RNA sequence: GGGAACGACUCGAGUAGAGUCGAAAAAACCCACCGCGAUGAUGAUCAGUGCGGCCUAGUCCUGAGCGUGAAGCAGGUGUGUGGCUGUCCGUCUAGCUGACUCCCUAUGGAGUUUGUCCGUGCGGACACUUUCUGUCAGUUUCGACUGACAGAAAGUAAAAGAAACAACAACAACAAC
Reactivity to 2A3 in 0.01 (KOAc 150mM, MgCl2 10mM, bicine 150mM(pH8.5), 24C), signal-to-noise 8, nucleotides 027 to 126: a000a010c010c000c000a010c010c010g040c040g020a080u110g020a020u050g010a040u100c040a030g040u030g100c010g020g010c000c010u030a030g040u030c000c020u030g030a040g050c050g070u130g130a090a010g030c030a030g000g030u020g010u020g020u030g040g010c020u020g010u020c010c010g000u010c030u030a030g010c000u020g030a030c000u030c020c010c000u090a190u300g030g010a030g000u000u020u030g050u000c020c030g050u100g050c050g010g000a000c010
Reactivity to DMS in 0.01 (KOAc 150mM, MgCl2 10mM, bicine 150mM(pH8.5), 24C), signal-to-noise 5, nucleotides 027 to 126: a090a070c010c010c010a140c070c040g020c030g000a090u030g000a100u020g010a060u010c070a070g010u000g000c030g010g000c080c060u010a130g000u010c020c010u000g010a080g010c070g030u030g010a070a090g000c060a070g020g010u020g010u010g010u010g000g000c060u000g000u000c020c010g010u000c060u000a080g010c030u010g000a020c010u000c000c000c300u020a140u030g020g000a040g000u000u000u000g010u010c030c110g000u030g000c030g000g000a030c040